Overview
This 177-nucleotide RNA was probed chemically with 2A3 and DMS. For DMS, 1,084 sequencing reads were counted. For 2A3, 2,285 sequencing reads were counted. Values cover nucleotides 27 to 126. The RNA was probed in 150 mM KOAc, 10 mM MgCl2 and 150 mM bicine (pH 8.5) at 24 C. Source: RMDB library TTRDEL, as collected in RNAgym. DMS adducts were read by reverse transcription with MarathonRT.
[RMDB]
RNA sequence: GGGAACGACUCGAGUAGAGUCGAAAAGAUAUGGAGAUUGGGAGCGUAAAUCCUCCCCACCUCGGAAACGAGAGGGAUGUACGCGAAGAACAAUCUCCUAAGUCAAACCAAGGCUUCGGCCUUGGAAGACCAUUAUACGCUUCGGCGUAUAAUGGUCAAAAGAAACAACAACAACAAC
Reactivity to 2A3 in 0.01 (KOAc 150mM, MgCl2 10mM, bicine 150mM(pH8.5), 24C), signal-to-noise 1, nucleotides 027 to 126: g030a010u170a070u220g030g000a010g000a000u010u010g040g040g000a000g000c000g010u010a030a070a080u040c000c010u060c010c000c020c000a040c030c010u020c010g030g000a110a070a060c020g000a000g000a020g000g000g000a000u020g050u050a010c020g010c020g150a300a080g000a030a020c000a000a020u020c000u000c000c010u010a030a010g040u020c110a020a060a070c020c000a020a000g000g000c010u070u240c300g180g000c000c000u000u000g000g010a000a000
Reactivity to DMS in 0.01 (KOAc 150mM, MgCl2 10mM, bicine 150mM(pH8.5), 24C), signal-to-noise 2, nucleotides 027 to 126: g030a110u010a180u000g020g000a010g030a020u010u020g060g030g000a080g040c000g030u010a040a040a030u000c000c010u000c090c010c000c030a300c130c010u010c000g000g000a090a090a160c020g010a010g010a160g020g000g040a030u000g000u000a010c000g000c000g000a060a110g030a170a140c030a000a010u010c000u000c000c000u010a020a030g000u030c140a060a140a160c010c000a000a000g010g000c010u000u010c170g070g000c010c000u000u000g000g000a130a110